[RMDB]
RNA sequence: GGGAACGACUCGAGUAGAGUCGAAAAUAAAUGGAGAAGAGAGAGAGUACAGCUUUGGGCGGUUUAGUUGUUAGAUGGUGGAAGUACUUGCGACGCCUACUACCCUUUUCACCAAGGCUGUACGCUCGACUGCCAUGAAGUUCGCUUCAUGGCAGUCAAAAGAAACAACAACAACAAC
Reactivity to 2A3 in 0.01 (KOAc 150mM, MgCl2 10mM, bicine 150mM(pH8.5), 24C), signal-to-noise 3, nucleotides 027 to 126: u120a000a040a070u110g110g040a060g020a230a000g090a000g020a010g000a000g000a010g030u010a010c000a020g000c020u000u000u010g010g010g040c170g080g060u000u020u040a020g010u010u120g040u010u030a020g000a070u050g030g000u030g020g020a150a030g000u040a260c120u050u080g040c040g000a020c020g030c000c000u030a060c010u010a030c040c000c000u010u040u030u020c040a050c000c000a000a000g000g000c000u000g000u000a000c000g000c000u000c000
Reactivity to DMS in 0.01 (KOAc 150mM, MgCl2 10mM, bicine 150mM(pH8.5), 24C), signal-to-noise 1, nucleotides 027 to 126: u050a010a050a090u000g010g000a080g000a100a040g000a130g020a170g040a040g010a040g070u000a000c000a020g000c000u000u000u000g010g000g000c290g000g020u050u000u000a080g000u000u000g000u080u000a000g010a170u000g000g000u000g010g060a120a130g010u000a090c140u050u040g000c010g000a150c150g000c030c010u090a260c020u020a020c040c060c040u050u000u000u000c020a110c030c000a020a000g040g010c000u060g000u000a000c030g000c060u000c000